[RMDB]
RNA sequence: GGGAACGACUCGAGUAGAGUCGAAAAAGAUAUGGAACUCGGGAGGCACUCUCUAGCUUUGAUCAGAGCUCGGAAACGAGCUCUGGGAGCUAGAACGUGAGUGCCGAAGAACGAGUUCCUAAGUCAACAUACCUAAACUGUUCGCAGUUUAGGUAUGAAAAGAAACAACAACAACAAC
Reactivity to DMS in 0.01 (KOAc 150mM, MgCl2 10mM, bicine 150mM(pH8.5), 24C), signal-to-noise 6, nucleotides 027 to 126: a110g010a050u000a300u010g000g000a000a010c000u000c010g000g000g010a130g020g010c000a010c000u000c010u000c000u000a010g000c000u000u010u000g010a130u010c010a010g000a010g020c000u000c000g000g000a120a080a260c000g020a010g000c000u000c000u000g000g000g000a000g010c000u000a000g000a030a090c300g030u010g010a020g000u000g010c000c000g000a060a070g000a130a190c010g000a010g010u000u000c000c010u000a010a080g010u000c030a170a300
Reactivity to 2A3 in 0.01 (KOAc 150mM, MgCl2 10mM, bicine 150mM(pH8.5), 24C), signal-to-noise 3, nucleotides 027 to 126: a000g020a030u070a030u100g020g010a000a010c010u000c020g000g000g000a050g010g000c010a000c010u010c020u000c000u010a000g000c010u250u220u150g110a130u290c000a000g000a000g010c000u000c010g010g030a030a090a050c010g000a010g000c000u000c010u000g010g000g010a000g000c000u010a000g010a050a020c110g190u170g010a010g000u000g000c000c000g000a010a000g000a010a000c000g000a000g000u000u000c000c000u010a050a000g050u010c010a010a070
Annotation: The record gives the reactivity of an RNA of 177 nucleotides to DMS and 2A3. DMS adducts were read by reverse transcription with MarathonRT. For DMS, 10,839 sequencing reads were counted. The RNA was probed in 150 mM KOAc, 10 mM MgCl2 and 150 mM bicine (pH 8.5) at 24 C.